This 207-nucleotide RNA was probed chemically with DMS and 2A3.
[RMDB]
RNA sequence: GGGAACGACUCGAGUAGAGUCGAAAACCGGAAUGGUUCCGCCGUGAUCGGGCCAUGCAAUAGUUGCCAACGACAACUAUGCUCCGGUUGCUCAGGCAGCGUAACGCUGCUUGGAAGACCACAUGAAUUAGCGCGACAUUGUUCGCAAUGUCGCGAAGAAGGUAAUGUCGUUCGCGACAUUACCUUCAAAAGAAACAACAACAACAAC
Reactivity to DMS in 0.01 (KOAc 150mM, MgCl2 10mM, bicine 150mM(pH8.5), 24C), signal-to-noise 2, nucleotides 027 to 156: c000c020g020g020a060a050u000g030g020u000u000c000c000g000c040c170g020u000g030a080u010c010g010g010g000c010c000a020u010g040c050a170a060u000a010g040u000u000g010c020c010a110a200c240g000a120c010a000a050c010u000a020u010g010c080u000c030c010g050g010u000u000g020c080u020c000a050g010g000c020a010g000c010g020u010a080a130c190g030c010u010g000c010u000u000g010g000a150a100g020a120c030c000a090c020a130u020g010a040a130u000u010a190g020c030g000c010g010a030c010a040u000u000g030u050u010c300g010c000a010a030u010g000u000c010g020c010g010a010a050
Reactivity to 2A3 in 0.01 (KOAc 150mM, MgCl2 10mM, bicine 150mM(pH8.5), 24C), signal-to-noise 4, nucleotides 027 to 156: c000c000g000g000a050a090u060g000g050u300u300c020c010g030c070c140g160u160g060a230u090c010g000g000g000c000c000a000u040g020c000a040a300u010a010g000u010u000g030c020c120a150a060c150g050a160c020a000a000c040u000a000u020g010c010u000c000c000g000g000u000u040g000c010u000c040a000g000g000c000a010g000c000g080u150a080a040c220g000c000u000g000c000u000u000g000g010a060a020g030a020c020c020a040c040a090u150g130a170a160u220u100a160g050c000g000c010g020a000c010a000u000u000g020u030u030c140g000c090a010a000u000g000u000c000g000c000g000a020a010
Source: RMDB library M2RFPK, as collected in RNAgym.